[RMDB]
RNA sequence: GGGAACGACUCGAGUAGAGUCGAAAAACGUGGUAGAACCGGUAGUUUUGGACAUAAGCUGGAUGUCAAUCUGGUUUGCGUUUAACCGCUCUUUCGAACCGACCUCUCGGUCGGAUAUGUUGAACGCAAGCCGAACUCUGUUCGCAGAGUUCGGCUUAAAAGAAACAACAACAACAAC
Reactivity to 2A3 in 0.01 (KOAc 150mM, MgCl2 10mM, bicine 150mM(pH8.5), 24C), signal-to-noise 1, nucleotides 027 to 126: a000c120g090u170g000g100u050a000g080a260a050c000c040g020g020u070a120g010u040u000u040u100g060g040a020c030a010u110a110a000g030c040u040g120g090a080u080g010u130c060a140a030u030c070u140g000g020u020u010u080g000c010g000u000u000u020a000a000c000c000g160c010u080c080u040u230u200c130g030a170a000c000c000g000a000c000c140u110c060u080c080g030g000u040c000g000g000a000u000a000u010g000u000u000g010a030a000c000g020c000
Reactivity to DMS in 0.01 (KOAc 150mM, MgCl2 10mM, bicine 150mM(pH8.5), 24C), signal-to-noise 1, nucleotides 027 to 126: a030c070g030u030g010g000u000a100g000a270a030c110c000g000g020u080a090g000u000u050u000u000g000g010a010c300a100u000a200a070g000c000u070g000g010a050u040g000u020c120a000a080u000c040u000g000g020u000u000u000g000c000g000u000u000u000a000a000c000c270g030c200u000c050u090u000u000c200g000a050a090c000c000g000a060c000c170u000c200u040c210g010g000u000c000g070g010a010u000a000u090g000u000u000g000a020a050c040g000c070
An RNA of 177 nucleotides, treated with 2A3 and DMS and read out base by base. For 2A3, 420 sequencing reads were counted. 2A3 adducts were read by reverse transcription with SuperScript II with manganese. DMS adducts were read by reverse transcription with MarathonRT. Values cover nucleotides 27 to 126. Conditions: 150 mM KOAc, 10 mM MgCl2 and 150 mM bicine (pH 8.5), 24 C.